[RMDB]
Source: RMDB libraries RFM100 and RFMREP, as collected in RNAgym. Structure probing data (DMS and 2A3) for a 177-nucleotide construct. Reactivities are given for positions 27 through 126.
RNA sequence: GGGAACGACUCGAGUAGAGUCGAAAAUGGGAUCGCGUCAGGACUGAAGGAGAGCGAAUCCCGGGGCUCGGUGUGGAGAAGGAGGUGCCAAGUAGCCCCGUUGCGGAGAGUGUGUCAGCCCCAUCGCUCGAUGUUGGAGAUUCGUCUCCAACAUCGAAAAAGAAACAACAACAACAAC
Reactivity to DMS in 0.01 (KOAc 150mM, MgCl2 10mM, bicine 150mM(pH8.5), 24C), signal-to-noise 3, nucleotides 027 to 126: u040g000g000g010a060u010c010g040c030g000u030c060a080g000g000a140c100u030g000a130a100g010g010a090g010a150g010c010g000a080a090u010c020c020c000g000g000g000g000c020u010c110g000g020u020g010u000g000g020a060g000a110a100g000g020a040g000g010u020g000c040c010a100a080g020u020a060g030c030c010c000c010g040u000u020g000c090g000g010a090g010a050g000u010g000u010g020u010c050a080g010c040c010c020c030a090u030c100g000c150
Reactivity to 2A3 in 0.01 (KOAc 150mM, MgCl2 10mM, bicine 150mM(pH8.5), 24C), signal-to-noise 5, nucleotides 027 to 126: u090g020g000g040a020u030c040g000c050g110u060c050a020g050g130a110c030u100g060a110a040g120g030a060g010a020g030c030g010a060a100u020c000c010c000g000g000g010g010c040u060c080g020g030u100g040u100g040g070a100g010a100a080g050g030a070g020g020u050g020c010c000a090a020g030u090a020g030c010c000c000c000g050u110u110g000c030g000g020a040g000a020g070u060g000u000g010u050c020a010g030c000c000c000c000a050u090c040g020c050